RNA sequence: GGGAACGACUCGAGUAGAGUCGAAAAGCGGCACGCAGACGAACCUGAUCGCCUGCAGUCUAGCGCUACGCCCGUGGGAAGCCGUCAUCGCAACGCAGCUGGGCCACGUCAGCACGCACGAGACCGGGCUGCUGGAGUCGUUCGCGAUUCCAGCAGCAAAAGAAACAACAACAACAAC
Reactivity to 2A3 in 0.01 (KOAc 150mM, MgCl2 10mM, bicine 150mM(pH8.5), 24C), signal-to-noise 7, nucleotides 027 to 126: g050c020g030g030c050a010c070g000c010a010g020a050c020g030a050a100c010c080u160g060a180u040c030g010c010c010u030g030c020a010g010u010c060u090a030g050c020g000c030u040a040c040g020c000c020c020g030u080g030g020g030a090a040g030c020c000g060u040c020a110u070c040g040c050a020a050c060g030c050a050g000c020u070g010g050g010c030c010a050c010g050u060c020a020g030c040a020c060g030c000a030c050g070a050g020a040c020c000g030g040
Reactivity to DMS in 0.01 (KOAc 150mM, MgCl2 10mM, bicine 150mM(pH8.5), 24C), signal-to-noise 4, nucleotides 027 to 126: g000c030g010g000c070a100c050g020c010a020g000a070c040g000a040a090c140c090u020g010a110u010c030g010c030c000u000g000c010a110g000u000c080u030a120g030c030g030c050u000a070c140g020c000c020c010g000u010g000g000g010a050a070g010c000c010g010u000c050a070u010c040g030c110a080a070c110g000c050a040g010c010u010g000g000g000c010c020a050c050g000u030c080a080g020c070a130c080g000c040a120c050g000a080g000a080c040c000g000g010